[RMDB]
RNA sequence: GGGAACGACUCGAGUAGAGUCGAAAAUUUAGAAGGUCAAAUUGUCAGGGAUGCAGAUCGUCUUGAUGCUAUAGGCGCUAUAGGUGUUGCACGAACAUUUCAAUUUGCAGGACACUUUGGUGAACCACGUACUACCGUCAUUCGUGACGGUAGUACGAAAAGAAACAACAACAACAAC
Reactivity to DMS in 0.01 (KOAc 150mM, MgCl2 10mM, bicine 150mM(pH8.5), 24C), signal-to-noise 2, nucleotides 027 to 126: u000u000u000a080g010a110a050g020g000u000c030a080a050a090u010u010g000u020c060a050g020g010g020a120u000g030c050a050g000a100u000c040g000u010c060u000u000g010a090u000g010c080u000a080u010a070g000g010c090g010c080u010a040u000a060g030g010u010g030u000u000g010c060a080c150g000a050a110c160a060u000u000u010c110a070a080u000u030u010g020c000a050g000g000a060c070a050c030u020u000u000g020g000u000g010a070a160c040c050a110
Reactivity to 2A3 in 0.01 (KOAc 150mM, MgCl2 10mM, bicine 150mM(pH8.5), 24C), signal-to-noise 1, nucleotides 027 to 126: u150u140u070a060g010a110a010g070g020u020c010a020a050a060u100u050g030u000c000a000g090g000g000a020u010g020c020a020g040a060u060c040g060u000c030u080u050g040a030u080g030c000u060a040u130a170g010g090c020g000c100u040a020u060a110g050g000u030g040u040u100g020c080a060c070g030a130a050c090a070u020u040u080c050a120a150u040u040u130g050c040a010g020g000a020c020a000c060u060u070u060g080g030u040g040a070a010c020c020a030

Structure probing data (DMS and 2A3) for a 177-nucleotide construct.
For 2A3 the reverse transcriptase was SuperScript II with manganese.
DMS adducts were read by reverse transcription with MarathonRT.
It was measured as part of the RMDB library OK2TRN.
The DMS profile rests on 1,493 reads.
The RNA was probed in 150 mM KOAc, 10 mM MgCl2 and 150 mM bicine (pH 8.5) at 24 C.